RNA sequence: GGGAACGACUCGAGUAGAGUCGAAAAGAUAUGGACGUUCCAGGACAUACAACAGCGGAGAUCGGAAACGAUCUCCGACAUGUAUCGCUGGAGACGUCCUAAGUCAAAGUGAAGCUUCGGCUUCACACGAAUUAGCACACUUCGGUGUGCUAAUUCGAAAAGAAACAACAACAACAAC
Reactivity to 2A3 in 0.01 (KOAc 150mM, MgCl2 10mM, bicine 150mM(pH8.5), 24C), signal-to-noise 1, nucleotides 027 to 126: g040a040u080a040u140g000g020a010c000g030u010u030c000c000a000g100g000a090c030a050u100a010c050a100a000c040a130g070c000g010g000a000g000a000u000c010g050g000a100a070a040c040g000a010u000c000u000c000c000g010a000c010a010u020g010u030a020u060c160g010c140u000g000g010a140g070a080c000g020u000c000c000u010a080a000g030u000c060a230a060a000g010u010g000a010a000g000c010u060u150c300g180g030c000u000u050c070a010c010a010
Reactivity to DMS in 0.01 (KOAc 150mM, MgCl2 10mM, bicine 150mM(pH8.5), 24C), signal-to-noise 2, nucleotides 027 to 126: g010a010u010a300u020g000g010a010c000g020u000u010c000c000a000g000g010a300c120a050u000a040c020a050a080c300a210g010c000g000g000a050g020a000u000c010g020g010a160a050a220c000g000a020u000c000u000c040c040g020a000c130a110u010g010u000a020u000c220g000c010u000g000g020a070g000a020c000g030u000c000c000u010a000a090g000u020c090a150a060a140g000u000g060a050a020g010c000u010u010c270g000g040c000u010u000c000a000c000a050